Chemical mapping of a 207-nucleotide RNA with 2A3 and DMS. Source: RMDB library OK3TST, as collected in RNAgym. 2A3 adducts were read by reverse transcription with SuperScript II with manganese.
RNA sequence: GGGAACGACUCGAGUAGAGUCGAAAAUCUGAGACCAGCCUGGGUAUUAUAGUAGGACCCUGUCUCUACAAAAACUGAAGAAUUAUCUGGGCAUGGUGGUGUGCAUCUGUAGUCCUAGUACUUUCUAAGGCUGAGGCAGGAGGAUCACUUGAUCCCACCAAUUCAGGAGAUUCGUCUCCUGAAUUGGAAAAGAAACAACAACAACAAC
Reactivity to 2A3 in 0.01 (KOAc 150mM, MgCl2 10mM, bicine 150mM(pH8.5), 24C), signal-to-noise 3, nucleotides 027 to 156: u060c030u070g040a010g040a070c020c020a030g030c000c020u030g000g030g000u070a080u150u080a150u150a080g030u010a040g000g070a020c060c050c060u060g020u000c070u000c000u020a070c050a030a180a070a120a040c090u180g030a050a010g010a060a130u130u020a030u050c000u030g010g000g000c060a110u050g020g000u050g030g030u150g040u090g020c020a030u010c020u030g070u090a030g030u110c000c000u010a000g000u020a150c060u090u130u090c050u090a080a060g060g000c060u000g040a020g040g000c010a000g000g040a060g010g010a040u020c010a010c090u060u080g040a020u030c020c020c010a000
Reactivity to DMS in 0.01 (KOAc 150mM, MgCl2 10mM, bicine 150mM(pH8.5), 24C), signal-to-noise 1, nucleotides 027 to 156: u000c050u000g000a140g010a210c040c060a080g040c000c020u000g000g040g050u000a000u010u000a080u000a130g020u000a050g000g010a100c030c100c050u010g000u010c020u000c000u000a300c070a070a030a200a110a300c090u010g050a150a150g010a120a150u010u000a060u000c010u000g030g010g020c010a110u020g020g030u010g010g000u000g000u010g000c070a080u000c030u000g000u000a030g000u000c000c010u000a070g010u010a040c160u010u000u010c010u000a050a160g040g040c000u020g000a070g010g030c020a010g010g040a110g010g010a040u000c000a050c060u010u000g000a080u000c040c010c020a250